[RMDB]
RNA sequence: GGGAACGACUCGAGUAGAGUCGAAAACAACCUCGGCGGUGAGGCGCUCCGGUAGUGAACGGCUCACGCUCGGAGAUAGUUAGUCCCAGCCUCACAGACGUUGUAGUCGGAUGGAUGGUCUGAGGAACAAUACUGCAGUUGCCGCUGAGCAAUUGCCGAUCGACUUCUAAUUCGUUAGAAGUCGAUCAAAAGAAACAACAACAACAAC
Reactivity to 2A3 in 0.01 (KOAc 150mM, MgCl2 10mM, bicine 150mM(pH8.5), 24C), signal-to-noise 4, nucleotides 027 to 156: c030a020a030c030c000u010c010g020g020c030g030g050u080g010a050g070g020c000g020c010u010c000c010g090g030u080a110g020u090g100a080a070c050g170g020c040u000c000a010c020g030c080u110c040g040g000a010g000a040u180a020g040u090u050a020g040u020c000c020c000a020g010c000c000u030c020a160c020a010g010a000c010g060u110u220g120u250a070g050u060c010g010g070a070u110g030g030a040u060g010g020u100c030u030g050a180g060g050a050a000c040a020a050u200a120c100u080g000c000a110g000u030u000g010c010c000g090c150u090g010a050g090c000a000a070u040u060g010c020c040
Reactivity to DMS in 0.01 (KOAc 150mM, MgCl2 10mM, bicine 150mM(pH8.5), 24C), signal-to-noise 1, nucleotides 027 to 156: c050a110a140c070c020u010c000g000g010c030g000g090u030g010a050g020g000c010g010c000u000c000c000g010g030u000a130g020u030g010a000a180c070g020g000c090u000c030a030c020g060c050u020c020g060g020a050g000a150u000a100g020u000u000a180g030u000c070c010c020a200g000c020c020u020c030a090c020a210g010a080c030g030u000u010g000u010a230g000u010c030g020g030a120u010g030g010a090u020g000g060u000c030u000g030a140g040g010a130a190c030a070a190u000a140c060u000g010c000a120g030u000u000g010c000c000g000c100u000g000a150g040c010a160a050u000u010g010c020c180
About this RNA:
This 207-nucleotide RNA was probed chemically with 2A3 and DMS. The reactions ran in a buffer of 150 mM KOAc, 10 mM MgCl2 and 150 mM bicine (pH 8.5), at 24 C. 2A3 adducts were read by reverse transcription with SuperScript II with manganese. It was measured as part of the RMDB library OK3TST. DMS adducts were read by reverse transcription with MarathonRT.